Chemical mapping of a 207-nucleotide RNA with 2A3 and DMS. 2A3 adducts were read by reverse transcription with SuperScript II with manganese. Reactivities are given for positions 27 through 156. The 2A3 profile rests on 2,268 reads.
[RMDB]
RNA sequence: GGGAACGACUCGAGUAGAGUCGAAAAAUCCUCAGGUUCAUAAGCGUGAUGAUUGGGUGUUCAUGCUCCAUGCAUGACAUGUGCCCCCUUUGAACCUUGUUACGACCUUGGCACAUUACCCAUCUGAAAAAGACGUUCGCGUUCGCGCGAACGUCAACGAUAUGAAGCGGUUCGCCGCUUCAUAUCGAAAAGAAACAACAACAACAAC
Reactivity to 2A3 in 0.01 (KOAc 150mM, MgCl2 10mM, bicine 150mM(pH8.5), 24C), signal-to-noise 3, nucleotides 027 to 156: a010u010c000c000u030c010a010g010g010u000u010c010a020u060a210a050g050c090g140u050g130a080u040g000a020u100u250g020g000g000u080g030u120u070c000a000u010g010c010u070c170c080a140u300g000c000a000u000g010a000c010a010u040g030u010g000c000c000c000c000c000u000u000u010g000a000a000c000c000u000u060g060u040u110a150c140g050a090c040c100u060u070g010g000c010a000c000a030u020u170a020c010c000c000a000u000c030u070g050a140a090a010a010a040g000a000c000g000u010u000c000g000c000g030u010u030c200g020c000g000c000g110a010a010c000g000u000c000a010a000
Reactivity to DMS in 0.01 (KOAc 150mM, MgCl2 10mM, bicine 150mM(pH8.5), 24C), signal-to-noise 2, nucleotides 027 to 156: a100u010c020c000u000c080a070g040g010u010u000c010a070u010a040a050g030c100g000u010g010a260u020g000a120u010u010g020g000g030u010g030u000u000c010a040u000g010c000u000c160c200a150u000g020c010a020u000g010a030c240a100u000g030u000g000c000c010c090c050c010u000u000u000g000a040a070c020c020u000u000g010u010u000a150c120g020a070c110c060u000u000g000g000c030a050c020a110u010u000a100c030c020c020a060u000c070u040g010a090a110a060a130a170g010a010c000g020u010u000c010g010c000g040u000u010c300g010c020g050c020g000a000a010c000g060u000c000a010a010